RNA sequence: GGGAACGACUCGAGUAGAGUCGAAAAACAAUGGAAGAGCACAGUCCUUUGGAUUGGGUCUCGCAUCCGCUAAAUGGUCCUUGAAAACCGGAUUAUGGUAUUUAAUCCUAUUUGGUGUUCGUACCAAUAACCACAUCAGGUCUCCAAGGUGAAUAGCCAUACACGCGUACUUCGGUACGCGUGUAUGAAAAGAAACAACAACAACAAC
Reactivity to 2A3 in 0.01 (KOAc 150mM, MgCl2 10mM, bicine 150mM(pH8.5), 24C), signal-to-noise 3, nucleotides 027 to 156: a000c050a010a080u220g030g020a010a030g010a050g010c030a010c000a040g010u020c020c010u210u180u300g010g000a010u010u020g010g010g100u120c030u010c040g070c010a100u030c020c000g020c030u030a060a110a100u120g080g000u000c000c000u000u000g040a020a030a020a040c020c010g020g000a010u020u030a040u200g050g040u060a100u070u200u140a120a120u100c010c020u100a190u070u050u080g020g000u040g080u120u180c040g010u060a030c000c000a010a020u060a030a060c030c030a020c010a080u020c020a010g000g000u000c010u000c100c010a010a010g000g000u020g050a080a110u030a040g000c010
Reactivity to DMS in 0.01 (KOAc 150mM, MgCl2 10mM, bicine 150mM(pH8.5), 24C), signal-to-noise 1, nucleotides 027 to 156: a060c020a050a060u020g020g030a110a090g000a040g030c010a100c010a040g020u000c000c010u000u000u000g070g020a040u000u000g010g000g010u010c000u000c040g040c090a160u000c030c020g030c070u000a060a050a100u000g030g000u000c000c010u010u020g020a010a020a010a030c000c020g030g020a030u000u000a000u010g010g030u000a110u000u010u000a090a060u000c120c080u010a130u000u000u000g020g030u000g000u000u000c180g030u000a060c030c010a110a090u000a090a050c030c010a020c080a050u000c040a030g020g020u000c020u000c010c000a040a120g010g020u000g010a080a120u010a080g010c060